[RMDB]
RNA sequence: GGGAACGACUCGAGUAGAGUCGAAAAUCUCCGUGGGGUUUGAUCAUCGCGUGGUCUCGACGAAUGUAGAAACAGGUCGUUCCGUUGUUAUGGGUCAGAUGACGGAGACCAUUCGGUUUGUAGAGUAAUAAUGCAUGAUAUUCGUAUCAUGCAUUAUAAAAGAAACAACAACAACAAC
Reactivity to DMS in 0.01 (KOAc 150mM, MgCl2 10mM, bicine 150mM(pH8.5), 24C), signal-to-noise 9, nucleotides 027 to 126: u000c020u000c010c070g030u000g020g010g010g010u000u000u010g010a090u010c080a040u000c060g010c070g020u000g010g010u000c020u000c030g010a070c040g000a090a070u010g010u010a110g010a110a080a100c140a110g010g010u000c010g010u000u010c010c000g020u000u000g010u000u000a080u010g000g010g010u000c040a110g010a060u000g010a040c030g010g000a100g000a040c020c010a100u000u000c060g010g010u000u000u000g010u000a070g000a110g000u010a080
Reactivity to 2A3 in 0.01 (KOAc 150mM, MgCl2 10mM, bicine 150mM(pH8.5), 24C), signal-to-noise 9, nucleotides 027 to 126: u020c020u000c010c010g020u060g010g080g010g010u040u110u200g070a080u080c030a010u040c030g010c030g040u050g020g020u030c020u020c040g040a030c020g040a100a060u130g060u150a080g150a090a110a020c050a050g010g050u010c010g050u060u010c010c010g000u000u030g000u000u040a130u130g100g010g030u050c030a020g010a100u050g010a040c010g010g010a020g010a020c000c010a020u070u060c020g050g030u050u060u090g090u080a070g010a020g070u020a020